[RMDB]
RNA sequence: GGGAACGACUCGAGUAGAGUCGAAAAAAAAAUAUUUCAGGAAUAUGAAGUUUCAGAUCAUCCUAAAGAAGUCAAAGAACCACCAAAAAGAGAAGUUUCCCAGGUGAUCGAAGAUCAUGGAAAGAAGAUAUGGAACAAAGUUCGCUUUGUUCCAUAUAAAAGAAACAACAACAACAAC
Reactivity to DMS in 0.01 (KOAc 150mM, MgCl2 10mM, bicine 150mM(pH8.5), 24C), signal-to-noise 4, nucleotides 027 to 126: a010a060a090a100a050u020a040u010u010u010c030a060g000g000a080a060u040a050u000g000a120a120g030u000u000u000c040a080g020a060u000c030a050u010c010c020u010a030a060a080g000a060a070g010u020c050a030a060a080g000a040a040c020c030a030c030c040a010a090a040a050a110g000a040g010a050a110g000u000u010u000c010c000c020a090g000g010u000g000a010u010c020g000a050a070g000a010u000c020a020u000g010g020a060a050a050g000a070a060g000
Reactivity to 2A3 in 0.01 (KOAc 150mM, MgCl2 10mM, bicine 150mM(pH8.5), 24C), signal-to-noise 2, nucleotides 027 to 126: a000a000a000a000a000u170a060u080u070u030c070a060g000g050a040a040u080a130u270g020a040a060g050u060u090u030c070a060g000a010u040c030a010u040c010c000u010a020a050a070g120a050a030g070u130c070a150a060a040g040a040a090c000c000a000c000c030a030a130a070a080a000g100a030g000a100a010g010u020u060u010c000c050c000a000g120g000u020g010a030u030c040g040a040a030g000a000u040c020a020u040g060g100a070a050a000g050a060a030g040